[RMDB]
RNA sequence: GGGAACGACUCGAGUAGAGUCGAAAAGAUAUGGAUAGUAGAGACAUGCUCCUUGUCGGAAACGACAACGAGCAACAGCUCUCACUAUCCUAAGUCAAAUCUAUGGAUUGUUCGCAAUCCAUAGAAACCGAUACGUAAAGUUCGCUUUACGUAUCGGAAAAGAAACAACAACAACAAC
Reactivity to 2A3 in 0.01 (KOAc 150mM, MgCl2 10mM, bicine 150mM(pH8.5), 24C), signal-to-noise 3, nucleotides 027 to 126: g010a020u020a020u060g020g010a010u000a000g010u040a110g020a020g020a060c130a300u300g000c000u000c020c020u020u010g010u010c000g000g000a010a000a020c000g000a000c000a010a000c010g000a000g050c000a040a060c060a010g010c010u000c000u000c020a020c010u010a010u000c000c000u000a020a010g010u010c020a070a030a240u010c000u010a000u000g010g000a000u010u010g030u080u110c190g000c190a000a010u020c000c000a000u000a010g020a020a000a010
Reactivity to DMS in 0.01 (KOAc 150mM, MgCl2 10mM, bicine 150mM(pH8.5), 24C), signal-to-noise 4, nucleotides 027 to 126: g010a020u010a080u010g000g000a010u000a020g020u010a080g030a010g010a040c080a190u000g010c010u000c000c070u000u000g000u000c000g020g000a040a040a060c010g010a000c000a000a010c290g020a030g000c010a060a080c300a100g020c080u010c000u000c200a040c010u000a000u000c000c000u000a000a060g000u000c010a100a180a110u000c000u000a000u000g000g010a010u000u010g020u010u000c270g030c020a010a010u010c000c000a000u000a000g000a020a120a180